An RNA of 177 nucleotides, treated with DMS and 2A3 and read out base by base. The data come from the RNA Mapping Database (RMDB), library OK2TRN. For DMS, 838 sequencing reads were counted. Conditions: 150 mM KOAc, 10 mM MgCl2 and 150 mM bicine (pH 8.5), 24 C.
[RMDB]
RNA sequence: GGGAACGACUCGAGUAGAGUCGAAAAUGGUCAACGAUUUCAGGACAAGCUGUUAGCAGGACGUGCCCGCGCUGCGCUAUCCAAAAACGUCAUGGGCACGCAUGAUGGUGAAAUGCGGCGGACACCAGGAUGGUACGCAGUUCGCUGCGUACCAUCCAAAAGAAACAACAACAACAAC
Reactivity to DMS in 0.01 (KOAc 150mM, MgCl2 10mM, bicine 150mM(pH8.5), 24C), signal-to-noise 1, nucleotides 027 to 126: u010g060g020u000c070a070a080c050g020a140u000u010u000c040a090g010g000a090c110a040a110g000c030u020g050u020u010a040g000c070a130g010g000a050c040g000u000g000c010c000c030g060c270g040c090u000g000c100g000c070u000a130u020c080c130a050a040a040a040a160c040g000u000c040a090u000g000g020g000c020a010c040g030c070a110u020g000a110u020g000g000u010g010a130a040a030u000g060c010g000g020c060g020g000a070c030a090c060c050a100
Reactivity to 2A3 in 0.01 (KOAc 150mM, MgCl2 10mM, bicine 150mM(pH8.5), 24C), signal-to-noise 1, nucleotides 027 to 126: u100g000g000u050c040a080a000c090g040a080u030u150u030c030a030g000g060a070c050a140a020g020c020u060g020u230u090a020g060c040a080g010g100a020c000g020u000g000c010c030c010g040c110g030c080u030g000c000g000c040u040a100u080c010c050a110a000a020a100a040c040g010u030c010a030u090g040g030g070c050a000c020g010c030a000u020g010a000u040g040g040u080g020a040a040a010u150g050c020g010g000c000g020g020a010c040a010c000c000a000